[RMDB]
RNA sequence: GGGAACGACUCGAGUAGAGUCGAAAAGGGCCGCCAGCUAUCUUGGCGAAGAAAUCACGAUCUAUCCGUAUAUCAACGAAACAAUUAUUUCCGGCGGCACCGCGCAUGAAGGCGGGGCGGUCCAUGUUAUUGACACAAUGAGAGUGAAUCCAUGAGCAAUUACCUCGGUUUUCGAACCGAGGUAAUUAAAAGAAACAACAACAACAAC
Reactivity to 2A3 in 0.01 (KOAc 150mM, MgCl2 10mM, bicine 150mM(pH8.5), 24C), signal-to-noise 1, nucleotides 027 to 156: g020g000g000c000c020g000c020c030a000g000c000u110a060u230c010u000u060g040g000c020g000a040a000g050a060a220a000u170c120a040c030g030a020u020c020u170a090u090c060c020g100u030a090u020a000u180c110a150a040c130g110a180a020a060c040a060a030u300u070a090u060u220u000c080c000g100g000c000g010g040c030a000c000c000g020c000g000c000a060u010g120a080a020g030g010c020g060g100g000g100c060g010g000u010c000c000a000u040g000u040u130a240u110u100g010a000c050a030c050a250a000u160g040a040g000a000g050u000g040a050a050u000c000c000a030u020g030a020g110c020

Source information: Conditions: 150 mM KOAc, 10 mM MgCl2 and 150 mM bicine (pH 8.5), 24 C. An RNA of 207 nucleotides, treated with 2A3 and read out base by base. For 2A3 the reverse transcriptase was SuperScript II with manganese. It was measured as part of the RMDB library OK3TST. The 2A3 profile rests on 355 reads.